[RMDB]
RNA sequence: GGGAACGACUCGAGUAGAGUCGAAAAAAAAAACGCUGGGAUGCGAGCCUCACCCUAAGUCAACAGCGCUCUGAAGCGCGCACGGAGCGACAUGACUUAUGUGCUGAGGCCGCAUCCUGUGCUGAAGCGCGCACGGCAACCGAAAGGUGCGAAAAAAGAAUGACUAUAAGUUCGCUUAUAGUCAUUCAAAAGAAACAACAACAACAAC
Reactivity to 2A3 in 0.01 (KOAc 150mM, MgCl2 10mM, bicine 150mM(pH8.5), 24C), signal-to-noise 1, nucleotides 027 to 156: a000a000a000a050a000a000c000g020c000u030g000g000g010a010u000g000c030g040a080g000c000c000u010c000a000c000c000c010u000a000a000g000u010c020a080a050c090a300g020c020g000c000u000c000u030g060a230a030g030c020g000c010g000c000a000c020g040g010a000g010c000g020a040c100a240u300g000a000c000u040u000a010u050g080u050g060c300u010g000a010g000g000c000c010g010c000a000u000c000c010u000g000u010g000c000u000g010a080a020g000c000g000c000g020c010a010c020g030g000c010a010a000c000c000g030a090a050a020g010g010u040g020c030g050a140a010a010a010a030a000
The record gives the reactivity of an RNA of 207 nucleotides to 2A3. 2A3 adducts were read by reverse transcription with SuperScript II with manganese. Source: RMDB library RNAMAK, as collected in RNAgym. Reactivities are rounded to 0.1 and cut off at 0 and 3.